[RMDB]
RNA sequence: GGGAACGACUCGAGUAGAGUCGAAAAGUUUGCUCGUCCUCUCCUAUUUAUUUUUAUGGUGUGCGGAUGGUAUUUAUUUAUAUGGAGAGGACGAGCUAUUAUUUAGAAUCCAUCCGCACACCUAAGAGGGCUUUGUGUGGUUCGCCGCACGGGGCCCAAAAGAAACAACAACAACAAC
Reactivity to DMS in 0.01 (KOAc 150mM, MgCl2 10mM, bicine 150mM(pH8.5), 24C), signal-to-noise 4, nucleotides 027 to 126: g000u020u030u030g000c010u000c000g020u000c000c010u000c000u000c000c000u020a050u030u040u050a070u030u050u010u030u040a060u030g010g010u000g000u010g000c000g010g000a010u000g020g000u030a040u010u020u020a060u020u050u010a070u030a050u040g010g000a010g010a020g020g030a000c000g000a000g000c010u010a000u010u020a050u020u030u040a070g020a140a090u030c000c000a010u000c000c010g000c010a010c000a000c000c000u000a030a070g000a210
Reactivity to 2A3 in 0.01 (KOAc 150mM, MgCl2 10mM, bicine 150mM(pH8.5), 24C), signal-to-noise 7, nucleotides 027 to 126: g080u080u120u160g010c000u010c000g000u020c010c010u020c000u030c010c010u030a120u110u250u020a210u040u210u140u050u100a180u200g000g000u000g000u000g000c000g000g010a000u000g010g010u020a060u010u140u020a100u010u170u020a190u060a110u150g000g000a000g000a000g000g000a000c000g000a000g000c000u000a000u010u000a010u000u060u080a020g030a010a020u020c000c000a000u000c000c000g000c010a000c000a000c000c000u000a000a000g040a030